[RMDB]
RNA sequence: GGGAACGACUCGAGUAGAGUCGAAAACGUCUGAGCAGUCCCUGCGCCCUCGAAAGGAUGGCAAUGAGAUCUACGGCACGGCAACAAUGAGCAAAAGGCUAACCGAGCACAAUGUACAGCCUGUACAAUCCUUGUGCUGGUUCGCCAGCACAAGGAUAAAAGAAACAACAACAACAAC
Reactivity to 2A3 in 0.01 (KOAc 150mM, MgCl2 10mM, bicine 150mM(pH8.5), 24C), signal-to-noise 1, nucleotides 027 to 126: c020g040u000c080u090g030a060g030c040a020g010u080c010c020c020u000g070c020g000c000c000c010u040c040g150a190a000a000g100g020a040u030g020g020c000a020a070u090g100a030g020a090u020c010u170a060c010g070g000c020a020c080g020g030c020a040a010c030a040a160u150g010a030g060c010a000a060a140a000g030g000c030u040a020a020c000c010g080a010g020c030a030c000a080a120u070g000u080a000c030a020g070c040c050u060g040u020a010c000a010
Reactivity to DMS in 0.01 (KOAc 150mM, MgCl2 10mM, bicine 150mM(pH8.5), 24C), signal-to-noise 2, nucleotides 027 to 126: c120g010u000c030u000g000a130g050c030a070g000u000c010c000c000u000g000c130g000c020c010c050u030c030g010a080a100a140g000g020a040u000g000g010c000a100a130u000g010a080g020a080u020c040u000a060c100g000g020c010a060c060g020g000c030a080a060c060a070a060u000g010a140g030c060a070a090a080a070g030g010c020u000a060a050c020c030g000a070g000c020a010c040a030a040u000g040u000a000c060a100g040c100c070u010g000u000a020c080a070
Chemical mapping of a 177-nucleotide RNA with 2A3 and DMS. 2A3 is a SHAPE reagent: it acylates the 2'-hydroxyl of flexible nucleotides of all four kinds. For 2A3, 1,057 sequencing reads were counted. The RNA was probed in 150 mM KOAc, 10 mM MgCl2 and 150 mM bicine (pH 8.5) at 24 C.